[RMDB]
RNA sequence: GGGAACGACUCGAGUAGAGUCGAAAAUUCCCGAUUCCGUCCAUCCCCACCCCCGGGUGUCCCCCCAGGAAUGGCGGGACCCCACUCGACAGGGUCCGCGUACCAUCCUUUCUUACCUGAUGGCCGGCUAUGGUAGAAACUUCGGUUUCUACCAUAGAAAAGAAACAACAACAACAAC
Reactivity to DMS in 0.01 (KOAc 150mM, MgCl2 10mM, bicine 150mM(pH8.5), 24C), signal-to-noise 2, nucleotides 027 to 126: u000u000c000c000c010g020a150u020u020c030c000g030u020c020c000a020u000c010c030c000c020a210c050c000c010c030c040g000g020g040u010g000u000c000c010c000c010c000c000a060g020g000a080a070u000g010g010c080g010g000g000a000c010c000c010c060a060c110u010c170g030a170c190a190g000g000g000u010c030c030g000c040g010u010a130c020c000a030u000c000c020u000u000u000c150u020u020a080c140c170u020g020a050u000g010g020c010c010g000g000